[RMDB]
Structure probing data (DMS) for a 177-nucleotide construct. Conditions: 150 mM KOAc, 10 mM MgCl2 and 150 mM bicine (pH 8.5), 24 C. Values are in units of 0.01, from 0 to 300, in steps of 10.

RNA sequence: GGGAACGACUCGAGUAGAGUCGAAAAGCCCUCCGAGGCUCGUAUGGCCCUGCGCUCCUGCAAGGGCGGCACCGCCGUCGAACAGGCUGUUCAGUUUAUUCACGAGCGUCGUCAGCAGCUCAAGAAACUGGUCGUCAGUAUUCGUACUGACGACCAGAAAAGAAACAACAACAACAAC
Reactivity to DMS in 0.01 (KOAc 150mM, MgCl2 10mM, bicine 150mM(pH8.5), 24C), signal-to-noise 2, nucleotides 027 to 126: g000c020c010c000u000c090c100g000a090g010g000c000u000c040g050u000a070u000g000g010c190c190c000u030g010c120g000c040u010c040c010u000g030c080a080a210g010g010g030c020g000g030c050a140c110c180g040c030c000g000u000c000g000a170a120c030a030g000g020c080u010g020u000u010c070a040g000u000u000u000a140u040u000c080a110c110g000a080g000c000g020u000c080g000u020c080a070g000c120a090g010c080u010c030a130a210g010a090a120a110